[RMDB]
RNA sequence: GGGAACGACUCGAGUAGAGUCGAAAAGGUUUUAUUAAAUGGAACACAAAGCACAGUGUCAUUUUUCUGUCAUUUUAUGCAGUUUUCUUCAAUUCAGAAAUACAGGUAAAUAUUAUAACAAAAAGAGGACUAAUACCUGCUUAGGAGUUAUGAAUAAGUAAAUGGUAGGAUUCGUCCUACCAUUUACAAAAGAAACAACAACAACAAC
Reactivity to 2A3 in 0.01 (KOAc 150mM, MgCl2 10mM, bicine 150mM(pH8.5), 24C), signal-to-noise 2, nucleotides 027 to 156: g000g000u060u040u220u210a080u030u050a050a030a010u030g080g000a110a030c050a040c060a030a120a060g070c080a080c030a090g010u020g000u040c050a020u030u060u030u060u110c020u000g010u100c000a000u120u200u160u100a050u130g010c020a010g030u010u040u070u050c020u060u040c010a030a130u050u060c000a030g220a110a110a110u230a070c010a000g080g020u110a010a100a000u080a060u190u010a130u110a160a050c000a000a160a070a010a030g040a080g090g000a000c010u040a080a000u010a070c010c010u000g000c000u120u080a000g040g030a050g110u010u070a050u150g110a120a050u300a280a020
Reactivity to DMS in 0.01 (KOAc 150mM, MgCl2 10mM, bicine 150mM(pH8.5), 24C), signal-to-noise 1, nucleotides 027 to 156: g000g010u000u000u000u000a150u010u010a060a070a110u000g000g030a070a100c080a100c070a010a050a070g000c030a060c040a120g010u000g000u010c010a080u000u000u010u000u000c010u000g060u030c040a070u010u000u000u010a050u010g000c050a130g010u000u000u000u000c020u010u010c050a070a180u010u000c230a080g010a040a040a060u000a040c080a020g010g010u010a020a080a080u010a060u000u010a100u010a000a170c010a050a050a010a040a090g010a040g010g010a030c060u000a060a170u000a060c090c060u010g010c030u010u000a120g010g000a180g000u000u000a060u010g000a080a060u010a040a240